[RMDB]
RNA sequence: GGGAACGACUCGAGUAGAGUCGAAAAUAUAAGAGCAUGAACCCGAUUAUGAACUGCACAUGUGAGGAAUCUAGGUUGCACACUCCUUAUGAGAAUUGUCUGAUUAUCUGAGGUGGAAUAGUUUCAUCCUUAAGCAAUACCCCCGCCCCUUGCAUGGCAUUUGCUUCCUUUUCGAAGGAAGCAAAUGAAAAGAAACAACAACAACAAC
Reactivity to 2A3 in 0.01 (KOAc 150mM, MgCl2 10mM, bicine 150mM(pH8.5), 24C), signal-to-noise 3, nucleotides 027 to 156: u200a000u040a050a070g070a020g020c090a090u080g100a060a040c030c010c060g010a020u090u070a120u260g050a040a050c030u100g010c070a040c010a110u040g020u060g020a030g060g010a050a020u080c050u060a090g010g080u070u140g040c040a050c000a020c060u090c030c030u150u110a120u170g060a020g040a140a080u190u060g120u140c050u120g050a080u080u140a060u070c010u030g020a000g000g040u020g030g050a070a070u090a060g060u070u130u080c040a040u080c020c000u070u100a080a020g000c000a020a220u110a210c020c010c020c010c000g030c010c040c010c020u000u000g000c000a010u020g010g030
Reactivity to DMS in 0.01 (KOAc 150mM, MgCl2 10mM, bicine 150mM(pH8.5), 24C), signal-to-noise 2, nucleotides 027 to 156: u000a100u010a040a110g010a090g040c020a080u020g000a090a230c040c030c030g020a160u000u040a070u000g020a050a070c070u010g000c030a110c070a060u000g010u000g000a100g010g000a060a080u000c060u020a130g020g010u010u000g020c080a080c080a060c030u000c010c060u000u000a040u020g010a110g010a050a110u000u000g010u000c080u000g010a160u010u020a050u010c090u020g000a100g010g080u020g010g050a080a100u000a090g000u000u000u000c020a090u000c020c020u000u000a020a110g000c030a090a120u000a200c030c010c000c000c000g020c050c010c000c060u000u000g000c110a070u020g020g010

Structure probing data (2A3 and DMS) for a 207-nucleotide construct. For 2A3, 919 sequencing reads were counted. Conditions: 150 mM KOAc, 10 mM MgCl2 and 150 mM bicine (pH 8.5), 24 C. The DMS profile rests on 3,513 reads.